[RMDB]
RNA sequence: GGGAACGACUCGAGUAGAGUCGAAAAAGUCAGAGGGCGCUACCAUGCAAACUAGGGCUGGCUACUCUUGCACAGUAUCACAUCUCGAUAAUUGUCAGUGCAAGAAGGACAAUUAUACCAUUUAAUGAAAACGUUUACCUGUUCGCAGGUAAACGAACCAACUUUACUUGUUCGCAAGUAAAGUUGGAAAAGAAACAACAACAACAAC
Reactivity to DMS in 0.01 (KOAc 150mM, MgCl2 10mM, bicine 150mM(pH8.5), 24C), signal-to-noise 2, nucleotides 027 to 156: a130g020u000c050a150g010a110g020g030g020c130g070c040u000a050c020c050a090u000g000c060a110a120a130c100u010a080g010g020g000c010u000g040g020c020u000a090c020u000c020u010u010g000c000a020c000a070g000u000a090u000c050a060c100a120u000c090u000c120g010a110u000a010a040u000u020g000u000c000a230g040u010g000c010a050a020g010a070a110g000g000a030c010a020a070u000u000a090u000a210c110c080a130u000u010u000a080a090u010g000a100a060a090a110c000g020u000u000u010a000c000c010u000g000u000u000c300g040c000a030g040g020u000a010a000a000c020g000a010a070
Reactivity to 2A3 in 0.01 (KOAc 150mM, MgCl2 10mM, bicine 150mM(pH8.5), 24C), signal-to-noise 7, nucleotides 027 to 156: a000g030u010c010a010g010a030g050g040g010c030g000c020u100a240c100c060a100u220g000c020a040a080a050c020u060a040g020g070g030c010u000g010g010c010u010a010c000u010c000u000u000g000c010a000c000a010g000u020a050u200c050a040c030a270u070c070u080c130g070a020u010a010a000u010u000g010u000c000a000g000u000g000c000a000a000g010a010a010g000g000a000c000a020a000u020u000a030u040a090c030c060a120u140u180u280a190a100u230g060a040a040a010a030c000g000u000u000u000a000c000c000u000g020u040u040c170g020c090a000g000g000u000a000a000a000c000g000a000a000

An RNA of 207 nucleotides, treated with DMS and 2A3 and read out base by base. Values cover nucleotides 27 to 156. The RNA was probed in 150 mM KOAc, 10 mM MgCl2 and 150 mM bicine (pH 8.5) at 24 C. Source: RMDB library M2RFOK, as collected in RNAgym. The 2A3 profile rests on 6,669 reads. For 2A3 the reverse transcriptase was SuperScript II with manganese.